[RMDB]
RNA sequence: GGGAACGACUCGAGUAGAGUCGAAAAGAAAUCUUAAGGGAUUGGAUAUGACCACCUCAGCUGGUCCCAAGAUGAAACUCAAACAUGGAAUACACACAAAAGAACCACUCUUCGUUGACGCGACCAACAACGAUAAUCCAUGGUACCGGGUGGCCUCCCCUCAAGCAUUGUUCGCAAUGCUUGAGGGAAAAGAAACAACAACAACAAC
Reactivity to 2A3 in 0.01 (KOAc 150mM, MgCl2 10mM, bicine 150mM(pH8.5), 24C), signal-to-noise 1, nucleotides 027 to 156: g010a030a060a010u070c070u110u120a100a160g030g000g060a060u040u030g060g000a120u160a140u300g030a090c100c100a070c150c120u050c060a020g000c010u080g000g000u010c000c020c010a020a010g030a000u140g010a110a010a020c070u110c150a070a050a030c060a010u010g040g070a000a110u120a120c080a000c010a000c030a060a010a090a100g050a030a020c000c060a030c040u020c120u080u020c000g010u010u010g050a100c030g020c050g190a080c020c030a030a010c000a000a010c030g000a010u060a020a060u030c010c030a000u000g020g010u020a050c080c060g030g000g000u000g010g000c000c010u030c000